Chemical mapping of a 177-nucleotide RNA with DMS and 2A3. The 2A3 profile rests on 1,848 reads. For DMS, 916 sequencing reads were counted. Conditions: 150 mM KOAc, 10 mM MgCl2 and 150 mM bicine (pH 8.5), 24 C. It was measured as part of the RMDB library TTRDEL.
RNA sequence: GGGAACGACUCGAGUAGAGUCGAAAAGAUAUGGAUUACGUGGAAUGCUAUUUGGAUCGGAAACGAUCCAUGUAGCGAGAGACGUGUCCUAAGUCAAAAGUCACUCAGCCUUCGGGCUGAGUGACAAGCAACAAAUAAGCUUCGGCUUAUUUGUUGCAAAAGAAACAACAACAACAAC
Reactivity to DMS in 0.01 (KOAc 150mM, MgCl2 10mM, bicine 150mM(pH8.5), 24C), signal-to-noise 1, nucleotides 027 to 126: g000a020u030a300u000g010g000a000u000u020a000c010g000u000g000g000a280a170u000g010c010u010a000u000u000u000g020g010a020u000c010g010g000a090a040a190c000g010a020u010c000c000a000u000g010u000a010g020c020g010a050g040a300g000a000c000g010u000g010u000c000c000u000a080a170g000u010c040a040a050a110a140g000u000c000a020c010u010c000a020g030c000c000u000u040c200g010g020g000c010u000g010a010g010u010g000a000c000a000a010
Reactivity to 2A3 in 0.01 (KOAc 150mM, MgCl2 10mM, bicine 150mM(pH8.5), 24C), signal-to-noise 1, nucleotides 027 to 126: g010a010u100a050u120g040g030a060u210u300a160c010g000u030g070g110a080a050u080g000c000u000a040u010u040u020g000g030a010u010c010g000g090a070a070a050c030g010a000u080c000c020a000u000g000u000a000g000c010g000a000g000a010g010a000c000g010u000g000u000c010c000u000a190a010g010u030c020a050a050a090a060g000u000c000a010c000u000c000a000g000c010c010u100u250c300g070g000g000c000u000g010a000g000u000g000a000c000a010a000